[RMDB]
RNA sequence: GGGAACGACUCGAGUAGAGUCGAAAACUGAUUGAUUUUCCCCAAAGUGCUAGGCUUUUGGGAGAGGAAUGGGUUUAUGUCUCUUUGCAUUAGCCUAGGGAGACAGAAGAAGAUGGUGUCAGGAAGUCGGGCAGGGAAGGCCCUUUGGUAUGUAUACAGUUGCAAGUAACUUCGGUUACUUGCAACUAAAAGAAACAACAACAACAAC
Reactivity to 2A3 in 0.01 (KOAc 150mM, MgCl2 10mM, bicine 150mM(pH8.5), 24C), signal-to-noise 1, nucleotides 027 to 156: c040u100g070a150u120u050g010a080u030u100u040u030c000c000c000c000a060a020a040g040u080g050c060u140a090g070g000c000u010u070u060u030g000g000g010a000g010a020g030g030a080a050u070g050g060g000u020u090u020a060u080g100u010c020u000c000u030u050u070g040c030a040u000u080a010g000c010c020u050a030g010g010g010a020g000a000c060a000g050a030a000g050a030a000g030a050u080g000g020u040g040u050c080a040g000g090a050a000g020u050c080g000g010g000c040a020g040g020g020a040a020g020g000c000c050c000u020u030u010g060g010u100a080u140g040u050a130u070a080c110
An RNA of 207 nucleotides, treated with 2A3 and read out base by base. Values cover nucleotides 27 to 156. 2A3 adducts were read by reverse transcription with SuperScript II with manganese. The data come from the RNA Mapping Database (RMDB), library OK3TST. Values are in units of 0.01, from 0 to 300, in steps of 10.